[RMDB]
RNA sequence: GGGAACGACUCGAGUAGAGUCGAAAAUUCAAUCAAAUUAACACCUAAUUUACCGAUUUCGUCGGGCGAAUAGUAGGUUGCAAAGGUGCGAUUACCUGGAUCAAUGGCACAGAUACCUUUAGCGUUAUUGUCUGAGCUACGUCGCUUAAAAGGCACACGCAGAAUGUUGUUUCGACAACAUUCUGCGAAAAGAAACAACAACAACAAC
Reactivity to DMS in 0.01 (KOAc 150mM, MgCl2 10mM, bicine 150mM(pH8.5), 24C), signal-to-noise 1, nucleotides 027 to 156: u000u000c080a030a150u000c050a030a140a270u010u010a050a120c070a080c050c000u030a080a050u000u000u000a030c000c000g010a020u010u040u010c230g030u010c020g050g000g080c130g000a050a070u010a110g000u010a050g050g070u030u000g020c080a050a080a140g050g010u000g000c000g030a200u000u000a050c020c000u000g020g000a080u000c100a140a160u050g000g110c020a140c080a080g000a110u000a040c000c050u020u000u000a090g060c080g040u010u010a030u040u000g000u030c000u000g000a250g020c070u020a070c110g020u020c070g020c020u010u000a040a070a100a040g020g010c000a070c050a160
Reactivity to 2A3 in 0.01 (KOAc 150mM, MgCl2 10mM, bicine 150mM(pH8.5), 24C), signal-to-noise 1, nucleotides 027 to 156: u100u090c070a000a160u020c030a050a060a060u090u080a140a040c030a020c030c000u050a060a040u020u000u090a050c000c020g010a030u010u230u190c160g020u040c040g030g030g050c070g030a000a000u140a080g140u060a010g000g000u010u050g000c010a090a060a040g030g000u030g020c040g020a000u070u110a030c050c030u040g010g010a000u040c050a090a060u080g010g000c040a010c010a080g010a030u030a000c000c050u060u030u160a030g030c020g070u020u050a070u050u190g050u010c060u080g020a000g060c010u030a020c030g060u000c030g000c020u050u110a000a090a000a000g060g000c060a030c000a000